[RMDB]
The record gives the reactivity of an RNA of 177 nucleotides to DMS and 2A3. For DMS the reverse transcriptase was MarathonRT. Conditions: 150 mM KOAc, 10 mM MgCl2 and 150 mM bicine (pH 8.5), 24 C. 2A3 adducts were read by reverse transcription with SuperScript II with manganese. Source: RMDB library TTRDEL, as collected in RNAgym.

RNA sequence: GGGAACGACUCGAGUAGAGUCGAAAAGAUAUGGAUAUAUUCCCUCUCCUGGAGCGACGAAGUCGGAAACGACAGAGCUCCCUGAGAGAACAUAUAUCCUAAGUCAAAAGGCAUGUUCGCAUGCCAAGAAUAAUGUAAUGUUCGCAUUACAUUAUUCAAAAGAAACAACAACAACAAC
Reactivity to DMS in 0.01 (KOAc 150mM, MgCl2 10mM, bicine 150mM(pH8.5), 24C), signal-to-noise 9, nucleotides 027 to 126: g000a040u000a300u010g000g000a010u000a010u000a010u000u000c190c140c010u000c000u010c000c040u000g010g010a010g020c010g010a130c230g000a080a100g000u000c000g010g000a080a080a190c010g010a010c000a040g000a200g000c000u000c000c000c030u000g000a020g010a020g000a070a080c240a020u000a000u000a000u000c000c000u000a050a100g010u000c040a080a070a120a110g000g010c000a010u000g010u000u020c180g010c010a010u000g010c000c010a050a050
Reactivity to 2A3 in 0.01 (KOAc 150mM, MgCl2 10mM, bicine 150mM(pH8.5), 24C), signal-to-noise 9, nucleotides 027 to 126: g020a020u080a040u180g000g000a010u010a000u000a010u100u110c040c000c000u010c000u000c000c020u010g010g000a010g010c010g300a300c040g050a250a020g010u000c000g020g040a090a080a060c010g000a000c000a010g030a010g000c000u000c000c000c000u000g000a010g000a000g030a030a000c040a010u010a000u000a000u000c000c000u010a130a030g090u050c040a060a020a100a070g000g000c000a000u010g010u100u180c300g010c150a010u000g000c000c000a000a020